[RMDB]
RNA sequence: GGGAACGACUCGAGUAGAGUCGAAAAAGAGCUGGAGCUCUGCCCAAGAGAAGCACGAGUUUUAGUGUCAGCCUAAGAGGUUCGAAUCCCAAUUCCACCCUACCACUGGCAACUUACAGAACUGGGUGUGUUACCUCACUUUUUAGUUCAUUACCUAAUCAGUCAGUAGUUUCGACUACUGACUGAUAAAAGAAACAACAACAACAAC
Reactivity to DMS in 0.01 (KOAc 150mM, MgCl2 10mM, bicine 150mM(pH8.5), 24C), signal-to-noise 2, nucleotides 027 to 156: a020g010a140g030c020u000g040g000a150g000c000u000c000u000g010c010c000c020a200a110g000a100g000a210a160g000c010a070c080g000a060g040u000u000u000u000a100g010u000g010u000c020a080g020c030c050u010a080a150g000a070g030g000u000u000c060g010a130a180u000c040c040c040a100a240u020u000c050c030a090c070c040c010u020a130c170c200a120c040u000g020g000c030a090a120c100u000u030a160c130a160g000a040a090c050u020g030g000g070u000g010u020g010u020u000a060c030c010u000c060a150c090u000u000u000u000u020a150g010u000u000c010a100u000u010a200c050c010u000a300
Reactivity to 2A3 in 0.01 (KOAc 150mM, MgCl2 10mM, bicine 150mM(pH8.5), 24C), signal-to-noise 2, nucleotides 027 to 156: a000g030a000g010c010u120g030g030a010g020c000u040c000u020g020c000c020c010a050a000g100a000g000a100a020g010c030a030c130g020a030g020u030u040u040u120a040g010u070g040u110c030a010g040c010c000u060a100a040g030a000g000g040u110u130c060g040a000a070u030c050c000c000a000a060u180u010c010c000a000c000c000c020u060a090c010c090a050c030u000g010g020c040a080a080c050u120u170a060c030a100g010a060a040c050u030g010g000g010u020g010u010g020u020u060a050c000c040u030c020a040c030u080u110u020u100u160a060g030u070u030c060a060u150u180a020c030c030u080a120